[RMDB]
RNA sequence: GGGAACGACUCGAGUAGAGUCGAAAAGAUCAAGUAAUCUCGUCGUCGUAGGCUCUGGAUGAUUGUGAUUCUGUGGCGGCGAGGGCAGAAUGAUAACCACAGCUUUCCUGCGCGUUACAGAGUUUAACAUGAGUGGGAGGUUCGCCUCCCACUCAUGAAAAGAAACAACAACAACAAC
Reactivity to DMS in 0.01 (KOAc 150mM, MgCl2 10mM, bicine 150mM(pH8.5), 24C), signal-to-noise 2, nucleotides 027 to 126: g020a100u010c050a080a110g000u000a090a160u010c000u000c000g010u000c010g020u000c040g020u000a050g000g000c120u000c020u010g030g030a190u020g000a090u000u000g000u020g000a050u000u000c020u000g010u000g010g020c030g000g000c030g020a020g010g020g040c090a050g000a110a090u010g000a050u010a110a180c060c030a040c100a050g010c100u000u000u010c070c030u000g010c050g040c070g010u010u010a030c100a030g000a110g010u000u000u000a030a170
Background: An RNA of 177 nucleotides, treated with DMS and read out base by base. For DMS, 1,735 sequencing reads were counted. It was measured as part of the RMDB library OK2TST.